[RMDB]
RNA sequence: GGGAACGACUCGAGUAGAGUCGAAAAUCUGUUGGUAGAGCACUUGUGCGACUCACACAGAGCGCUCUUCUAGCUACUGGUGAGAACUUUCGGACACGCAUGGCAACCACACUUGAAAGAAUUGCUGGUUUCAGACAAUUUUCGAAUUGUCUGAAACAAAAGAAACAACAACAACAAC
Reactivity to 2A3 in 0.01 (KOAc 150mM, MgCl2 10mM, bicine 150mM(pH8.5), 24C), signal-to-noise 3, nucleotides 027 to 126: u040c020u060g050u060u080g050g030u040a040g030a030g120c020a030c060u030u050g010u050g070c020g040a060c000u010c020a010c010a010c000a020g030a000g040c020g020c040u090c000u210u050c090u100a040g010c000u060a080c020u060g000g000u020g020a040g020a060a030c040u100u160u070c010g030g020a020c010a000c030g010c040a070u070g050g000c000a000a030c030c010a020c010a030c050u070u070g120a130a120a030g100a130a140u170u120g050c060u100g060
Reactivity to DMS in 0.01 (KOAc 150mM, MgCl2 10mM, bicine 150mM(pH8.5), 24C), signal-to-noise 4, nucleotides 027 to 126: u000c050u000g010u010u010g010g010u010a030g010a150g010c010a050c060u000u010g010u000g010c030g000a160c040u010c020a050c000a030c010a030g010a100g000c020g010c180u000c100u010u010c120u010a130g020c010u000a040c040u000g000g020u000g000a040g000a110a090c160u000u010u000c030g010g000a050c060a050c090g010c070a100u010g000g010c050a040a060c040c020a030c070a040c110u000u000g010a070a110a130g010a080a070u010u010g010c080u000g020